RNA sequence: GGGAACGACUCGAGUAGAGUCGAAAAACUACUCUUCUGGGUGAAAUUGUUCAGUACUAUACACAUUGGUCUGGAUCACUUAGAUUCUCUUCGAUGUAUACUGGUCCUGCCUUGUCCAGUGCUAAACGACGUGCCCUUGAUUCGUCAAGGGCACGUCAAAAGAAACAACAACAACAAC
Reactivity to 2A3 in 0.01 (KOAc 150mM, MgCl2 10mM, bicine 150mM(pH8.5), 24C), signal-to-noise 2, nucleotides 027 to 126: a000c030u040a050c020u020c000u150u000c060u070g060g000g010u050g140a040a000a220u220u080g050u010u010c000a000g070u010a030c000u040a040u050a070c110a000c020a040u060u160g040g000u090c050u070g000g020a030u020c020a040c000u030u000a030g010a120u200u030c070u000c030u090u140c230g040a110u020g050u060a100u010a190c030u060g040g000u050c010c010u020g000c000c040u030u090g000u030c010c010a000g000u000g010c030u050a040a110a120c060
The record gives the reactivity of an RNA of 177 nucleotides to 2A3.
For 2A3, 835 sequencing reads were counted.
2A3 is a SHAPE reagent: it acylates the 2'-hydroxyl of flexible nucleotides of all four kinds.